[RMDB]
RNA sequence: GGGAACGACUCGAGUAGAGUCGAAAACAACCUGGGAGUUACGUCCGGAUAUUGCCCCAGGGGCAAUAGAACGGUAGACAUCAACUGAUGCGAGAGCAUCUCAACUUAUGGACCUUAGUGUAUCGCAAGACGACCGGUCCCGUCGGAAUUGCGUAGAAUAUUACGUGGGAUUCGUCCCACGUAAUAUAAAAGAAACAACAACAACAAC
Reactivity to 2A3 in 0.01 (KOAc 150mM, MgCl2 10mM, bicine 150mM(pH8.5), 24C), signal-to-noise 4, nucleotides 027 to 156: c050a000a090c000c020u030g030g040g000a080g030u040u100a010c030g050u030c020c000g000g000a030u020a000u020u010g000c010c010c000c030a090g070g000g000g020c000a030a000u020a020g140a250a030c010g020g010u030a040g040a090c040a060u140c110a120a040c090u090g000a000u010g000c010g020a040g000a010g070c010a020u020c010u020c030a060a230c030u110u130a090u200g090g020a040c010c030u060u110a100g030u060g020u210a070u160c020g000c000a000a030g020a020c010g010a020c010c040g040g030u010c030c000c000g010u020c000g000g040a170a090u010u020g000c020g000u040a030g060a120
Reactivity to DMS in 0.01 (KOAc 150mM, MgCl2 10mM, bicine 150mM(pH8.5), 24C), signal-to-noise 4, nucleotides 027 to 156: c030a080a220c030c020u000g010g040g010a150g010u000u000a060c080g010u000c000c010g030g040a230u000a020u000u000g000c010c000c030c140a240g050g050g000g010c020a020a030u000a030g000a080a150c050g010g020u010a100g000a080c050a100u000c060a070a160c080u010g010a030u000g020c000g000a300g020a300g030c010a010u010c010u000c030a070a080c120u010u000a090u010g010g010a050c030c010u000u000a090g010u010g020u000a080u010c010g010c050a050a130g020a180c030g000a050c010c020g000g000u000c010c020c020g000u000c020g010g010a160a110u000u000g010c010g030u000a150g010a150
Structure probing data (2A3 and DMS) for a 207-nucleotide construct. Source: RMDB library OK3TST, as collected in RNAgym. For 2A3, 2,454 sequencing reads were counted. For DMS the reverse transcriptase was MarathonRT. The reactions ran in a buffer of 150 mM KOAc, 10 mM MgCl2 and 150 mM bicine (pH 8.5), at 24 C. 2A3 adducts were read by reverse transcription with SuperScript II with manganese.